[RMDB]
Conditions: 150 mM KOAc, 10 mM MgCl2 and 150 mM bicine (pH 8.5), 24 C.
Structure probing data (DMS and 2A3) for a 177-nucleotide construct.
It was measured as part of the RMDB library OK1LIB.
The 2A3 profile rests on 31,483 reads.
RNA sequence: GGGAACGACUCGAGUAGAGUCGAAAACGGCAGUGGCAUCUUAUCCGUACGUUAUGUGCGGAAUCGCAUCCUAUAAGCGUAGAUGCGAUGUCCAUAGAUGUGCAAGUGAGUAUCCCUGCUCCUAGCAUCUAGUCUUGCGGUUCGCUGCAAGGCUAGAAAAAGAAACAACAACAACAAC
Reactivity to DMS in 0.01 (KOAc 150mM, MgCl2 10mM, bicine 150mM(pH8.5), 24C), signal-to-noise 9, nucleotides 027 to 126: c150g010g010c090a080g020u020g000g000c010a030u000c000u000u010a110u010c010c020g010u000a000c010g020u040u050a050u050g010u000g000c000g000g000a040a010u000c000g000c000a010u010c100c080u000a070u020a100a160g010c250g010u010a040g000a020u000g010c000g000a010u000g000u030c140c120a010u010a030g000a020u010g010u010g010c020a080a070g010u040g010a050g000u000a080u010c010c010c000u010g000c000u000c010c010u000a070g020c090a200
Reactivity to 2A3 in 0.01 (KOAc 150mM, MgCl2 10mM, bicine 150mM(pH8.5), 24C), signal-to-noise 9, nucleotides 027 to 126: c020g040g000c040a030g020u040g050g000c000a000u000c010u020u050a030u020c000c000g000u010a010c020g140u230u300a150u300g010u010g000c000g000g000a010a000u020c010g000c000a020u050c020c060u170a120u060a290a110g110c130g110u080a010g010a010u000g000c000g010a010u020g070u020c030c000a020u000a010g050a030u040g020u050g050c020a030a050g040u070g180a020g010u040a060u060c000c000c000u010g010c000u000c010c010u020a030g020c010a040